Chemical mapping of a 177-nucleotide RNA with DMS and 2A3. DMS adducts were read by reverse transcription with MarathonRT. 2A3 adducts were read by reverse transcription with SuperScript II with manganese. Values are in units of 0.01, from 0 to 300, in steps of 10.

RNA sequence: GGGAACGACUCGAGUAGAGUCGAAAAAGACGGUGGCGCUGCCGCCCACGCGGACCCCGACGGCGUCGGUGAGCAGCACGCUGUGGUGGAGCGAUGUGGCGUGCCCGACGCCCGCCGUGACGACGAACCACUAUCGCAGGUUCGCCUGCGAUAGUGGAAAAGAAACAACAACAACAAC
Reactivity to DMS in 0.01 (KOAc 150mM, MgCl2 10mM, bicine 150mM(pH8.5), 24C), signal-to-noise 2, nucleotides 027 to 126: a150g000a070c040g010g010u000g000g010c040g000c010u000g020c020c020g010c020c000c020a020c030g010c040g010g030a220c100c000c020c020g030a110c000g020g020c020g040u000c130g020g010u030g030a130g020c080a130g000c080a050c010g000c000u000g020u010g000g000u010g030g010a220g000c010g010a070u010g010u020g000g020c010g000u010g020c040c190c000g000a070c020g000c030c000c020g030c000c000g010u000g000a110c060g020a100c170g010a090a160
Reactivity to 2A3 in 0.01 (KOAc 150mM, MgCl2 10mM, bicine 150mM(pH8.5), 24C), signal-to-noise 2, nucleotides 027 to 126: a000g120a010c030g010g010u050g000g000c040g010c130u040g000c000c000g010c000c020c000a000c010g050c040g050g160a170c070c000c010c000g060a010c050g080g080c000g000u000c100g020g070u300g050a140g000c130a030g040c030a050c020g000c000u030g000u050g030g040u070g020g030a100g000c020g080a230u020g030u130g010g010c030g050u090g040c030c030c040g050a040c010g010c000c020c000g000c000c030g010u040g010a080c120g030a000c030g000a010a090

The DMS profile rests on 1,648 reads. The 2A3 profile rests on 1,404 reads.